The record gives the reactivity of an RNA of 177 nucleotides to DMS and 2A3. The RNA was probed in 150 mM KOAc, 10 mM MgCl2 and 150 mM bicine (pH 8.5) at 24 C. For DMS the reverse transcriptase was MarathonRT. It was measured as part of the RMDB library TTRINS. For 2A3 the reverse transcriptase was SuperScript II with manganese.
RNA sequence: GGGAACGACUCGAGUAGAGUCGAAAAGAUAUGGAUCACGAACUACAGGCUAAUCAGCAACAGCACAAUUCUGAAUCGGAAACGAUUCAGAAUUGUGACAUGCUGACAACCUGCGUGAUCCUAAGUCGAUCAAUAUCAUGUUCGCAUGAUAUUGAUCAAAAGAAACAACAACAACAAC
Reactivity to DMS in 0.01 (KOAc 150mM, MgCl2 10mM, bicine 150mM(pH8.5), 24C), signal-to-noise 7, nucleotides 027 to 126: g010a100u000a300u000g000g000a010u000c000a020c010g010a110a050c110u010a300c020a000g020g010c010u010a270a300u000c000a010g000c000a030a090c300a230g000c000a010c000a010a010u000u000c010u000g000a010a000u010c000g010g000a140a090a200c000g010a000u000u000c000a000g010a000a000u000u000g020u000g000a000c100a140u000g010c000u000g000a010c100a120a200c000c000u000g000c000g020u000g010a010u000c000c000u000a010a090g010u010c100
Reactivity to 2A3 in 0.01 (KOAc 150mM, MgCl2 10mM, bicine 150mM(pH8.5), 24C), signal-to-noise 6, nucleotides 027 to 126: g100a060u170a050u250g000g000a010u010c030a000c020g030a130a080c140u290a070c300a020g010g010c030u150a200a110u030c010a000g000c010a030a130c040a230g070c000a010c000a000a010u010u010c010u010g010a000a000u010c010g010g060a080a110a050c000g000a000u020u000c000a000g000a000a000u000u010g000u000g000a000c000a010u060g010c000u000g020a000c000a020a020c000c000u000g020c010g000u000g000a000u000c010c000u010a030a020g110u080c100